[RMDB]
RNA sequence: GGGAACGACUCGAGUAGAGUCGAAAAACGCUUCACAAUGUGCGGCAAACAAACAUUGUUUAUGCAAAGGCACUUCGCAAUGUGUGCUCAAACAUUGCUUAUUCAAACACGCUUCACAAUGUGCGACAAAACUUCACGGUCUUCGGACCGUGAAGAAUCUUCAAAGUGGCUUCGGCCACUUUGAAGAAAAAGAAACAACAACAACAAC
Reactivity to 2A3 in 0.01 (KOAc 150mM, MgCl2 10mM, bicine 150mM(pH8.5), 24C), signal-to-noise 1, nucleotides 027 to 156: a000c020g000c020u000u000c010a000c000a000a000u000g000u000g000c010g050g000c150a010a030a210c050a090a000a000c000a050u020u020g050u000u050u080a050u060g050c020a120a000a000g160g000c000a000c020u030u000c040g040c040a000a040u010g020u010g020u020g050c100u090c100a020a060a020c020a000u000u000g000c000u060u100a140u160u140c070a080a050a050c040a010c090g010c030u160u110c040a010c050a250a070u150g030u020g080c020g030a050c070a020a160a020a010c010u010u020c000a010c000g020g000u010c010u020u070c070g070g000a000c000c000g020u000g000a000a000g000a000a010